Source: RMDB library M2RFPK, as collected in RNAgym. Chemical mapping of a 207-nucleotide RNA with 2A3.
[RMDB]
RNA sequence: GGGAACGACUCGAGUAGAGUCGAAAAACAGUACCAGCUGCUACGGCAGCUGGUACUGAACUUUCAUGGAGUUAAGAAACCACGUAAACGAAGCGGAACCGAAAAGCUAAACGAGUAGGAAGAAUAAAUAGGUACCACCACUUCGGUGGUGGUACAACAAUCUUUUUCCGUUCGCGGAAAAAGAUUGAAAAGAAACAACAACAACAAC
Reactivity to 2A3 in 0.01 (KOAc 150mM, MgCl2 10mM, bicine 150mM(pH8.5), 24C), signal-to-noise 1, nucleotides 027 to 156: a000c000a000g000u010a020c010c020a010g000c000u000g000c020u040a010c190g140g000c000a010g000c000u230g000g000u000a000c010u010g000a000a010c000u040u080u060c060a050u060g020g020a040g060u020u100a050a030g090a040a040a000c010c000a040c060g000u060a130a070a030c010g020a040a000g040c000g030g000a060a110c000c000g010a000a000a000a000g000c060u140a160a040a000c000g000a010g010u000a000g070g000a010a080g040a070a090u300a080a000a040u200a070g080g040u000a000c000c010a010c000c000a000c010u050u060c180g020g020u000g000g010u020g000g020u010a000c000a000a000
The 2A3 profile rests on 618 reads.